Structure probing data (2A3 and DMS) for a 177-nucleotide construct. Conditions: 150 mM KOAc, 10 mM MgCl2 and 150 mM bicine (pH 8.5), 24 C. The 2A3 profile rests on 32,237 reads. For DMS, 16,845 sequencing reads were counted. 2A3 adducts were read by reverse transcription with SuperScript II with manganese.

RNA sequence: GGGAACGACUCGAGUAGAGUCGAAAAAAGGUGUCAUGGUCAUUGUUGACCGUUCAUAUGAACCCUGCAAUAACAUUGCAACUUGUGUGGGGUUCAUAUAACGGUCAACUGAGACCUUUGACAUCAACAUAUGAUAUUCGUUCGCGAAUAUCAUAUGAAAAGAAACAACAACAACAAC
Reactivity to 2A3 in 0.01 (KOAc 150mM, MgCl2 10mM, bicine 150mM(pH8.5), 24C), signal-to-noise 8, nucleotides 027 to 126: a010a000g010g000u010g000u000c010a000u020g000g010u010c020a080u060u250g010u000u000g000a000c000c000g000u000u010c020a000u000a000u000g000a000a000c000c010c000u010g000c010a030a140u140a140a060c060a120u110u300g050c070a110a110c110u140u110g040u010g010u030g100g000g010g000u000u000c000a000u000a000u000a000a000c000g000g000u000c000a000a000c000u000g000a030g000a000c000c000u000u040u020g000a000c000a000u000c000a000a010
Reactivity to DMS in 0.01 (KOAc 150mM, MgCl2 10mM, bicine 150mM(pH8.5), 24C), signal-to-noise 8, nucleotides 027 to 126: a090a070g010g010u000g010u000c000a010u000g000g010u000c000a090u000u000g010u000u000g000a010c000c000g010u000u000c190a010u000a000u000g010a010a010c000c000c000u000g000c000a040a070u000a080a080c090a300u010u010g020c240a100a120c250u000u000g010u000g020u000g010g000g010g000u000u000c000a000u000a000u000a010a000c010g010g000u000c000a000a000c000u000g000a130g010a010c000c000u000u000u000g010a010c000a000u000c000a090a160
For DMS the reverse transcriptase was MarathonRT.